An RNA of 177 nucleotides, treated with 2A3 and DMS and read out base by base. It was measured as part of the RMDB library 15KREP. For DMS the reverse transcriptase was MarathonRT. For 2A3 the reverse transcriptase was SuperScript II with manganese. The RNA was probed in 150 mM KOAc, 10 mM MgCl2 and 150 mM bicine (pH 8.5) at 24 C. High 2A3 reactivity points to a flexible backbone, as in loops and unpaired stretches.
[RMDB]
RNA sequence: GGGAACGACUCGAGUAGAGUCGAAAAUCUUCGGUGAUCCUUCCUCUCCCUGUCGGUGAAGUCUCCCGCACGGGUCCUCUUCCUAGGUCCGGAGUCGAUCUCCAUCUGAUCCGUCCGGGCCCUCUUCGAUAUAGUUUUUGUUCGCAAAAACUAUAUCAAAAGAAACAACAACAACAAC
Reactivity to 2A3 in 0.01 (KOAc 150mM, MgCl2 10mM, bicine 150mM(pH8.5), 24C), signal-to-noise 1, nucleotides 027 to 126: u030c020u060u070c040g080g080u050g060a090u050c010c010u050u020c010c000u030c000u030c030c010c000u040g130u100c010g000g030u040g050a040a010g040u000c030u020c050c020c020g000c010a020c020g040g000g010u000c010c000u000c000u000u030c000c020u020a060g020g000u000c010c000g040g000a020g030u140c070g020a010u010c040u010c020c020a150u040c070u060g010a010u040c020c040g020u000c000c000g030g020g020c010c000c010u010c020u020u060c020
Reactivity to DMS in 0.01 (KOAc 150mM, MgCl2 10mM, bicine 150mM(pH8.5), 24C), signal-to-noise 2, nucleotides 027 to 126: u010c030u000u010c070g020g020u000g010a090u000c030c030u000u000c020c020u010c040u010c020c030c030u000g020u000c060g020g010u010g000a110a160g000u010c020u000c000c020c030g030c110a120c040g010g000g000u010c020c020u010c020u000u000c010c010u010a050g000g020u000c020c010g010g010a030g010u010c190g000a030u000c000u010c110c170a080u020c150u010g000a030u000c010c080g010u010c000c010g000g000g000c000c010c070u000c020u010u000c300